[RMDB]
RNA sequence: GGGAACGACUCGAGUAGAGUCGAAAAUACCAAUGGUUCGCCAUUGGUACUUGUUUUGACGAAUACUACCGUAGAAGUAUUCAGGUCUCAUAACUACGGAUAUACACUAGAGUUUCGACUCUAGUAACGUAAUAUGGGAAUUCGUUCCCAUAUUACGAAAAGAAACAACAACAACAAC
Reactivity to 2A3 in 0.01 (KOAc 150mM, MgCl2 10mM, bicine 150mM(pH8.5), 24C), signal-to-noise 9, nucleotides 027 to 126: u020a000c000c000a010a000u010g000g030u040u050c220g040c070c000a000u000u000g010g000u000a020c020u070u150g170u100u220u090u180g100a050c070g010a010a000u010a020c010u060a260c000c010g010u010a010g020a210a000g010u010a020u010u020c030a040g030g100u000c020u000c040a110u090a200a100c010u000a000c010g000g020a030u050a020u030a130c080a000c010u010a000g000a010g010u010u100u130c220g120a030c000u000c000u000a000g010u010a030a010
Reactivity to DMS in 0.01 (KOAc 150mM, MgCl2 10mM, bicine 150mM(pH8.5), 24C), signal-to-noise 9, nucleotides 027 to 126: u000a010c000c000a000a010u000g000g000u000u020c250g020c000c000a010u000u000g000g010u000a000c070u000u000g010u000u010u010u000g020a150c140g000a020a010u000a010c000u000a140c010c020g000u000a010g010a180a030g000u000a010u000u000c010a110g020g000u000c010u000c020a070u000a090a160c010u000a010c010g000g010a300u010a090u010a100c200a040c010u000a010g000a020g010u000u000u010c190g010a020c000u000c000u000a010g010u000a020a100
Description: Conditions: 150 mM KOAc, 10 mM MgCl2 and 150 mM bicine (pH 8.5), 24 C. This 177-nucleotide RNA was probed chemically with 2A3 and DMS. In probing experiments dimethyl sulfate is read out at A N1 and C N3, which are open when not base-paired. The DMS profile rests on 25,554 reads.